The record gives the reactivity of an RNA of 177 nucleotides to DMS and 2A3. For 2A3, 1,837 sequencing reads were counted. The reactions ran in a buffer of 150 mM KOAc, 10 mM MgCl2 and 150 mM bicine (pH 8.5), at 24 C. DMS adducts were read by reverse transcription with MarathonRT. The DMS profile rests on 4,904 reads.
RNA sequence: GGGAACGACUCGAGUAGAGUCGAAAAGACCUUCAGUUCGCUGAAGGUCGAUGAUGGUAAGAGAGAUUACCAUGUGUUAAGUGAUAUGGAUAAGAUCUCUCAGUGAACGUGCUUUCGAGCACGUUAAUUAAAUGAUCGCAUUCGUGCGAUCAUUUAAAAAAGAAACAACAACAACAAC
Reactivity to DMS in 0.01 (KOAc 150mM, MgCl2 10mM, bicine 150mM(pH8.5), 24C), signal-to-noise 4, nucleotides 027 to 126: g000a010c000c000u010u000c000a000g000u010u000c220g020c010u000g000a020a010g000g000u000c010g020a040u010g000a110u010g000g000u010a110a140g000a010g000a020g010a030u000u000a200c000c000a010u000g000u000g000u000u010a090a180g010u020g010a050u000a020u000g010g010a170u000a080a100g000a040u000c000u000c000u000c010a110g000u010g010a030a020c000g000u000g000c000u000u000u000c190g010a020g010c000a010c000g010u000u000a000a100
Reactivity to 2A3 in 0.01 (KOAc 150mM, MgCl2 10mM, bicine 150mM(pH8.5), 24C), signal-to-noise 2, nucleotides 027 to 126: g000a000c000c000u000u000c020a060g020u030u150c190g070c090u000g000a030a000g010g000u000c000g000a000u000g010a010u030g050g170u210a300a000g000a000g000a000g000a000u050u020a050c010c010a000u040g070u010g040u090u170a240a170g140u120g200a010u010a020u090g060g010a090u070a190a080g010a010u000c010u000c000u000c010a020g060u070g120a050a000c000g000u000g020c020u140u080u170c260g050a020g000c010a010c000g010u020u010a000a000